[RMDB]
RNA sequence: GGGAACGACUCGAGUAGAGUCGAAAAGAUAUGGAGCGUAGAGCAACAGCGUGCGGUUCGGAAACGAACCCACGACAUGCUCUGAUCUCCUAAGUCAAACCAAGGAAUACUUCGGUAUUCCUUGGAACACGAGUAAACCGUUCGCGGUUUACUCGUGAAAAGAAACAACAACAACAAC
Reactivity to 2A3 in 0.01 (KOAc 150mM, MgCl2 10mM, bicine 150mM(pH8.5), 24C), signal-to-noise 1, nucleotides 027 to 126: g020a010u020a000u090g000g000a000g000c030g040u130a040g000a000g040c100a050a240c170a250g060c010g020u020g020c200g030g000u000u000c000g000g000a010a010a000c020g000a000a010c050c010c010a000c010g000a010c010a080u200g000c000u000c000u010g000a020u000c000u060c010c000u000a020a000g020u010c060a140a050a110c000c000a000a000g020g010a010a010u010a000c010u110u180c300g120g010u020a000u020u000c010c000u010u010g000g000a010a010
Reactivity to DMS in 0.01 (KOAc 150mM, MgCl2 10mM, bicine 150mM(pH8.5), 24C), signal-to-noise 2, nucleotides 027 to 126: g010a010u000a110u020g000g000a020g010c220g010u010a010g030a010g000c000a070a060c270a250g020c000g000u000g000c270g000g020u000u010c000g030g000a040a050a120c010g010a000a010c000c000c000a000c000g000a040c150a100u000g000c010u000c000u000g000a090u000c000u000c000c020u000a010a050g000u000c030a230a070a260c000c010a000a020g010g000a010a000u000a010c000u000u030c170g020g000u000a020u000u000c000c000u000u010g010g010a060a100
An RNA of 177 nucleotides, treated with 2A3 and DMS and read out base by base. For 2A3 the reverse transcriptase was SuperScript II with manganese. The data come from the RNA Mapping Database (RMDB), library TTRDEL. Reactivities are rounded to 0.1 and cut off at 0 and 3. The reactions ran in a buffer of 150 mM KOAc, 10 mM MgCl2 and 150 mM bicine (pH 8.5), at 24 C. Values cover nucleotides 27 to 126. DMS adducts were read by reverse transcription with MarathonRT.